Chemical mapping of a 177-nucleotide RNA with DMS and 2A3. For 2A3, 1,555 sequencing reads were counted.
RNA sequence: GGGAACGACUCGAGUAGAGUCGAAAAGAUAUGGACCUUGAAGCCAUUUCGACUAUUCGGAAACGAACGAAUCGAUUUUGGCGUAUCAAGGUCCUAAGUCAAAGUGAAGGUGUUCGCACCUUCACAAUCAUUUCUCGUUCUUCGGAACGAGAAAUGAAAAAGAAACAACAACAACAAC
Reactivity to DMS in 0.01 (KOAc 150mM, MgCl2 10mM, bicine 150mM(pH8.5), 24C), signal-to-noise 2, nucleotides 027 to 126: g000a030u000a300u000g010g000a030c000c030u000u000g000a040a090g010c000c000a020u000u000u000c000g020a010c050u010a260u010u000c000g000g020a190a040a200c020g010a010a020c040g000a090a080u000c000g000a010u000u000u000u000g020g010c020g000u020a040u000c000a010a010g000g010u000c000c020u000a000a040g020u000c040a030a120a150g030u000g010a010a010g030g020u000g010u000u000c220g050c000a000c010c000u000u000c000a000c020a080a050
Reactivity to 2A3 in 0.01 (KOAc 150mM, MgCl2 10mM, bicine 150mM(pH8.5), 24C), signal-to-noise 1, nucleotides 027 to 126: g020a040u090a030u120g000g010a000c020c020u060u080g040a060a000g000c000c000a030u020u020u030c010g000a000c070u100a040u050u000c010g050g000a130a120a210c040g030a020a010c070g060a120a300u000c000g010a050u030u010u050u190g010g030c000g000u040a120u180c000a000a000g000g010u000c000c010u000a000a000g000u020c060a050a030a030g000u000g020a000a000g050g000u020g030u090u190c220g040c090a010c000c000u010u000c000a000c000a000a000